[RMDB]
RNA sequence: GGGAACGACUCGAGUAGAGUCGAAAAGAUAUGGACAGUGCGAUGAGAUCGGAUCGGAAACGAUCCGGAUCGAGCACGUCCUAAGUCAAAAGAGGCUUCUCUAUUCUUCGGAAUAGAGAAGCCUCAACGCAUCGUAUUAGUUCGCUAAUACGAUGCGAAAAGAAACAACAACAACAAC
Reactivity to DMS in 0.01 (KOAc 150mM, MgCl2 10mM, bicine 150mM(pH8.5), 24C), signal-to-noise 3, nucleotides 027 to 126: g000a010u000a300u000g010g010a010c000a090g060u000g010c000g010a210u010g010a130g000a100u000c010g000g000a020u010c000g020g000a150a070a220c000g000a010u010c000c000g020g000a030u010c000g010a240g010c000a000c010g000u000c000c000u010a010a100g010u000c030a060a070a120a080g000a000g010g010c000u000u010c000u000c000u000a010u000u000c000u000u010c210g000g000a010a010u000a000g000a000g000a000a000g000c000c000u000c000a000a030